RNA sequence: GGGAACGACUCGAGUAGAGUCGAAAACACAGUACCUAAGACUAAUGCUUUCUGUGGACACCACUGAGCUCUGCCUCAACUCCACCCUCUGCGACCGGAGGACUAUGCCCCUAGUAACUGCUGUCGGCACAUUGCCCCAAUUCGUUGGGGCAAUGUGAAAAGAAACAACAACAACAAC
Reactivity to 2A3 in 0.01 (KOAc 150mM, MgCl2 10mM, bicine 150mM(pH8.5), 24C), signal-to-noise 2, nucleotides 027 to 126: c060a000c030a010g050u090a070c020c030u090a110a080g120a130c040u110a120a060u170g050c020u060u120u000c010u040g050u050g060g010a010c040a030c040c000a020c040u010g050a010g050c030u020c040u090g060c010c030u050c040a060a060c020u060c020c020a020c000c020c000u000c020u030g040c020g060a030c000c030g060g000a020g000g000a000c010u060a060u170g040c020c000c010c010u010a010g040u020a080a030c030u040g040c050u030g030u070c020g020g000
Reactivity to DMS in 0.01 (KOAc 150mM, MgCl2 10mM, bicine 150mM(pH8.5), 24C), signal-to-noise 4, nucleotides 027 to 126: c050a080c100a080g010u010a110c100c060u000a080a100g010a130c080u000a110a090u010g010c060u000u000u010c040u010g010u000g010g010a060c130a120c050c060a060c110u020g010a090g020c050u000c100u000g000c030c000u020c060a070a120c060u000c020c040a060c070c020c010u020c030u000g000c040g010a080c050c050g010g000a040g030g020a070c070u010a040u000g000c010c000c010c030u000a050g000u010a120a080c070u000g000c050u000g010u000c040g010g020
Record summary
Chemical mapping of a 177-nucleotide RNA with 2A3 and DMS. The DMS profile rests on 2,892 reads. The reactions ran in a buffer of 150 mM KOAc, 10 mM MgCl2 and 150 mM bicine (pH 8.5), at 24 C. Source: RMDB library OK2TRN, as collected in RNAgym. For 2A3 the reverse transcriptase was SuperScript II with manganese.